[RMDB]
RNA sequence: GGGAACGACUCGAGUAGAGUCGAAAAAAGCAAAGCUAUUAAAUCAUACGAGAGCGAUAUUUUAGAAGCACUAUAUACAGAUUUAGGAAAAAAUAAAGUCGAAGCUUAUGCUACUGAAAUUGGCAUACUAGUACUAGUGUUUCGACACUAGUACUAGAAAAGAAACAACAACAACAAC
Reactivity to DMS in 0.01 (KOAc 150mM, MgCl2 10mM, bicine 150mM(pH8.5), 24C), signal-to-noise 3, nucleotides 027 to 126: a040a040g030c070a050a120a070g010c030u010a160u030u010a050a060a040u020c030a070u000a120c160g000a060g010a090g020c020g000a090u000a070u010u000u000u000a140g030a110a160g010c050a040c040u000a040u010a080u010a120c150a140g000a060u000u010u000a040g000g020a000a030a050a040a050a110u010a030a050a080g000u000c050g010a110a060g000c040u000u000a040u000g010c000u000a050c070u010g010a020a070a070u010u000g010g010c050a050u000a060
Reactivity to 2A3 in 0.01 (KOAc 150mM, MgCl2 10mM, bicine 150mM(pH8.5), 24C), signal-to-noise 2, nucleotides 027 to 126: a000a000g050c040a030a030a010g020c000u040a030u130u160a230a060a040u060c030a020u060a210c060g000a020g000a010g080c020g030a020u000a170u150u190u030u060a070g010a090a000g030c010a000c030u030a030u000a020u020a230c070a010g060a050u030u020u020a020g010g010a080a090a030a060a050a060u160a050a120a000g040u040c040g060a050a020g010c020u050u030a040u130g000c000u030a060c040u040g090a030a130a150u070u050g010g040c030a010u010a150

The record gives the reactivity of an RNA of 177 nucleotides to DMS and 2A3. Values cover nucleotides 27 to 126. For 2A3, 2,430 sequencing reads were counted. The reactions ran in a buffer of 150 mM KOAc, 10 mM MgCl2 and 150 mM bicine (pH 8.5), at 24 C.